[RMDB]
RNA sequence: GGGAACGACUCGAGUAGAGUCGAAAAGCGCGCGCGCAGACGCUCGACGACGUCCCGCUUCGCAUUGGGAUCGCCGAUCGCGACGAUCAGCUCGUCGCCGUCCUCGGGCGUGUAGGCAUCGAUGUCACACCAUCGGGUGGUUCGCCACCCGAUGGUGAAAAGAAACAACAACAACAAC
Reactivity to DMS in 0.01 (KOAc 150mM, MgCl2 10mM, bicine 150mM(pH8.5), 24C), signal-to-noise 2, nucleotides 027 to 126: g000c060g040c050g000c080g020c000g030c060a070g010a100c040g000c100u000c010g030a080c080g010a100c110g020u000c010c010c010g000c190u000u000c270g020c130a140u000u010g000g000g010a100u010c050g030c030c050g000a080u010c190g000c070g000a040c000g030a040u010c200a160g030c290u000c000g020u000c000g010c150c060g030u010c020c100u000c020g010g010g010c010g000u000g020u000a030g030g010c060a100u010c060g000a110u000g000u020c060a210
Reactivity to 2A3 in 0.01 (KOAc 150mM, MgCl2 10mM, bicine 150mM(pH8.5), 24C), signal-to-noise 2, nucleotides 027 to 126: g050c020g000c010g000c010g030c000g000c110a050g030a080c020g000c040u060c000g010a030c010g000a020c060g060u050c010c010c010g040c080u150u200c120g080c030a130u040u210g030g000g050a100u070c040g040c090c070g050a120u110c050g020c000g000a020c010g000a060u090c060a070g020c050u030c010g000u010c000g000c030c030g020u010c010c000u010c030g080g000g000c010g000u030g070u070a070g060g000c010a040u120c100g150a080u060g080u130c030a000
The data come from the RNA Mapping Database (RMDB), library OK2TRN. This 177-nucleotide RNA was probed chemically with DMS and 2A3. The reactions ran in a buffer of 150 mM KOAc, 10 mM MgCl2 and 150 mM bicine (pH 8.5), at 24 C. The DMS profile rests on 1,335 reads. For 2A3 the reverse transcriptase was SuperScript II with manganese. In probing experiments dimethyl sulfate is read out at A N1 and C N3, which are open when not base-paired.